[RMDB]
RNA sequence: GGGAACGACUCGAGUAGAGUCGAAAAGAUAUGGACCAUGGCAGCCUCGUUGGAUCUAUGAAGCGGACAAGGAUCGGAAACGAUCCUUGUCCGUGGAGAUCCGAUGGAGGCUGCAUGGUCCUAAGUCCUAUAUUACGAAGUUCGCUUCGUAAUAUAGAAAAGAAACAACAACAACAAC
Reactivity to DMS in 0.01 (KOAc 150mM, MgCl2 10mM, bicine 150mM(pH8.5), 24C), signal-to-noise 4, nucleotides 027 to 126: g010a120u000a290u010g000g010a030c010c010a010u000g030g030c000a010g010c010c000u000c010g000u000u000g020g010a010u000c000u000a290u020g010a130a300g000c000g010g000a030c010a020a010g000g000a020u000c000g010g000a100a090a200c020g020a010u000c000c000u000u000g000u000c010c010g000u000g000g000a020g000a000u000c000c000g000a000u000g030g040a020g000g010c000u000g000c000a000u000g000g000u000c000c000u000a000a070g010u000c020
Structure probing data (DMS) for a 177-nucleotide construct. The reactions ran in a buffer of 150 mM KOAc, 10 mM MgCl2 and 150 mM bicine (pH 8.5), at 24 C. It was measured as part of the RMDB library TTRINS.